[RMDB]
RNA sequence: GGGAACGACUCGAGUAGAGUCGAAAAGAUAUGGAUCACAGCAAGCUCCGGUUUCGGAAACGAAACUAGGAGUGAUGACCUGUGAGUCCUAAGUCAAAACGUUCUGGACGUUCGCGUCCAGAACGAAGUAAUGGUUCAACUUCGGUUGAACCAUUACAAAAGAAACAACAACAACAAC
Reactivity to 2A3 in 0.01 (KOAc 150mM, MgCl2 10mM, bicine 150mM(pH8.5), 24C), signal-to-noise 1, nucleotides 027 to 126: g000a000u040a020u030g010g000a020u050c010a010c000a010g000c010a030a080g020c000u000c000c000g000g040u000u010u000c000g000g000a020a030a020c020g020a000a000a010c020u130a290g020g010a000g000u010g000a020u020g000a010c010c000u000g010u030g010a030g300u080c010c000u010a020a000g010u010c020a040a030a090a130c020g000u000u000c010u010g000g000a020c000g000u020u120c300g010c020g150u040c010c000a000g000a000a010c000g000a000a000
Reactivity to DMS in 0.01 (KOAc 150mM, MgCl2 10mM, bicine 150mM(pH8.5), 24C), signal-to-noise 2, nucleotides 027 to 126: g000a020u000a050u010g010g000a300u010c010a000c000a000g000c000a040a020g020c000u000c000c000g000g000u000u000u000c000g050g000a010a010a020c010g020a000a000a000c000u010a050g090g000a000g020u000g000a050u010g000a110c300c000u000g000u000g020a000g000u010c020c000u000a020a080g010u000c000a110a050a110a240c000g000u000u000c000u000g000g000a020c000g060u000u030c220g020c000g010u000c000c000a000g000a000a000c000g000a030a050
Structure probing data (2A3 and DMS) for a 177-nucleotide construct.
The RNA was probed in 150 mM KOAc, 10 mM MgCl2 and 150 mM bicine (pH 8.5) at 24 C.
For DMS, 1,874 sequencing reads were counted.
2A3 adducts were read by reverse transcription with SuperScript II with manganese.